Structure probing data (DMS) for a 177-nucleotide construct. Conditions: 150 mM KOAc, 10 mM MgCl2 and 150 mM bicine (pH 8.5), 24 C. For DMS the reverse transcriptase was MarathonRT.
RNA sequence: GGGAACGACUCGAGUAGAGUCGAAAAGAUAUGGAAGUAACAGGCGGAGGCUGAUGACCAUGACCCGAGCACAUAUCGGAAACGAUAUGGCUCGCAUGCAAGGCCUCCGCCUGUUACUUCCUAAGUCGUCGUAUAAUAGCUUCGGCUAUUAUACGACAAAAGAAACAACAACAACAAC
Reactivity to DMS in 0.01 (KOAc 150mM, MgCl2 10mM, bicine 150mM(pH8.5), 24C), signal-to-noise 1, nucleotides 027 to 126: g000a100u000a300u000g000g010a000a000g010u000a000a010c030a030g000g010c000g000g000a030g040g010c010u010g020a040u040g000a230c300c020a000u000g020a120c190c190c080g000a000g030c010a110c000a010u000a000u000c000g000g000a180a080a140c000g000a010u010a000u000g010g000c000u000c000g000c030a000u000g020c040a030a140g000g000c010c010u000c010c000g040c010c010u000g000u020u010a000c020u000u010c000c000u020a000a030g000u000c110